Source: RMDB library M2PK90, as collected in RNAgym. An RNA of 177 nucleotides, treated with 2A3 and DMS and read out base by base. For 2A3, 1,303 sequencing reads were counted. For 2A3 the reverse transcriptase was SuperScript II with manganese. For DMS, 2,822 sequencing reads were counted.
[RMDB]
RNA sequence: GGGAACGACUCGAGUAGAGUCGAAAAUCAUAGCUUCACCAGCGCGACCAGGUCCUCCACGAGCUGGCCCGCGGCCGCGAGCUCAGCUUUUACCUUCCCGCCCACCUCCUCGCGCAGGUACACCGAAUAUGACGACUUUAUUCGUAAAGUCGUCAUAAAAAGAAACAACAACAACAAC
Reactivity to 2A3 in 0.01 (KOAc 150mM, MgCl2 10mM, bicine 150mM(pH8.5), 24C), signal-to-noise 1, nucleotides 027 to 126: u090c030a050u000a090g040c050u140u090c040a060c060c020a030g000c030g000c020g070a030c030c020a040g070g050u020c010c000u040c010c000a030c070g010a040g020c000u020g000g000c000c020c000g020c040g070g110c160c130g030c020g020a020g000c020u050c200a010g010c000u110u100u090u080a070c020c040u060u000c010c000c000g000c000c000c000a030c000c010u000c000c000u000c010g010c000g000c030a010g080g020u040a010c020a040c040c020g050a080a010
Reactivity to DMS in 0.01 (KOAc 150mM, MgCl2 10mM, bicine 150mM(pH8.5), 24C), signal-to-noise 3, nucleotides 027 to 126: u010c100a060u010a090g000c050u010u000c090a070c050c020a100g040c000g020c060g000a070c060c070a070g010g000u000c040c020u000c030c050a110c160g010a060g020c000u000g010g000c000c020c000g020c010g030g000c160c120g020c030g000a030g000c030u010c030a030g000c020u000u000u010u000a100c090c070u000u000c030c010c020g010c040c010c020a070c050c030u010c030c050u010c020g010c050g000c040a030g000g020u000a070c120a110c050c030g000a080a140